Overview: This 177-nucleotide RNA was probed chemically with 2A3 and DMS. It was measured as part of the RMDB library OK2TRN. For DMS, 2,093 sequencing reads were counted. 2A3 adducts were read by reverse transcription with SuperScript II with manganese. The RNA was probed in 150 mM KOAc, 10 mM MgCl2 and 150 mM bicine (pH 8.5) at 24 C.
[RMDB]
RNA sequence: GGGAACGACUCGAGUAGAGUCGAAAAAACAACUGCAGCAGACUUGUUCUGUCAGCGACAUUGGGUGACCUUUUUUCGCCCUUAUUGCCUAUCAGAAAUUGACCUGAGUAUCACAAAUAAGAAUGCAGAAAAGUAAGGAGUUCGCUCCUUACUUUUCAAAAGAAACAACAACAACAAC
Reactivity to 2A3 in 0.01 (KOAc 150mM, MgCl2 10mM, bicine 150mM(pH8.5), 24C), signal-to-noise 2, nucleotides 027 to 126: a010a010c060a030a010c020u060g050c030a030g010c020a010g010a040c010u150u110g100u220u010c020u020g030u050c050a040g060c010g060a020c010a110u120u080g020g020g010u030g020a060c040c010u120u130u050u050u060u070c030g010c000c000c000u000u070a110u070u050g020c010c010u100a150u090c020a020g080a180a160a080u170u080g050a100c030c020u040g010a030g050u020a000u150c050a020c020a080a020a070u090a040a030g100a060a020u180g020c050a000
Reactivity to DMS in 0.01 (KOAc 150mM, MgCl2 10mM, bicine 150mM(pH8.5), 24C), signal-to-noise 3, nucleotides 027 to 126: a110a050c070a090a120c070u000g000c100a110g020c020a070g010a140c040u000u010g010u000u000c000u000g010u000c200a090g020c020g000a010c170a020u000u010g000g010g030u000g010a070c300c100u010u000u000u000u010u000c040g010c020c020c010u010u000a020u010u010g000c020c020u010a130u010c030a030g010a000a060a120u000u000g020a120c070c020u000g000a100g020u000a070u000c090a080c110a030a060a070u000a080a070g000a050a070u000g010c100a090